[RMDB]
Chemical mapping of a 170-nucleotide RNA with DMS and 2A3. Reactivities are given for positions 27 through 129. It was measured as part of the RMDB library 15KLIB. The reactions ran in a buffer of 150 mM KOAc, 10 mM MgCl2 and 150 mM bicine (pH 8.5), at 24 C. DMS adducts were read by reverse transcription with MarathonRT.

RNA sequence: GGGAACGACUCGAGUAGAGUCGAAAACCAGGGAUUUUCAUCCUCGAGUUUCUUGAUGGUUCUCCUGCUCUUCCGGAGCCUUCUUUCGAGGUCUUCCGCGUCUUUUCUUGCUUGGAUCCAUUUCUCGUCGCCGGUAACUUCGGUUACCGGAAAAGAAACAACAACAACAAC
Reactivity to DMS in 0.01 (KOAc 150mM, MgCl2 10mM, bicine 150mM(pH8.5), 24C), signal-to-noise 3, nucleotides 027 to 129: c020c030a130g000g000g000a040u010u000u060u020c030a110u030c000c000u040c080g010a150g030u000u010u030c090u000u000g000a100u060g000g060u010u040c040u040c020c000u040g050c000u040c090u030u050c090c050g000g000a070g000c000c000u000u000c000u000u000u000c130g000a000g070g070u020c020u120u010c060c020g040c120g030u030c000u020u100u020u020c030u000u060g010c090u020u040g020g030a080u040c000c070a130u020u000u020c010u010c070g050u030c150g020
Reactivity to 2A3 in 0.01 (KOAc 150mM, MgCl2 10mM, bicine 150mM(pH8.5), 24C), signal-to-noise 9, nucleotides 027 to 129: c010c000a030g030g020g000a020u070u090u070u150c060a030u040c000c010u030c060g060a080g000u040u060u010c050u060u100g080a090u100g060g000u080u030c030u000c030c000u030g030c020u010c010u150u040c040c030g020g000a020g000c020c000u060u050c010u060u150u100c070g010a010g000g040u010c040u030u000c010c010g030c020g070u020c020u020u100u050u030c040u050u090g030c010u010u040g030g010a020u030c020c010a070u040u070u020c060u020c030g170u040c080g010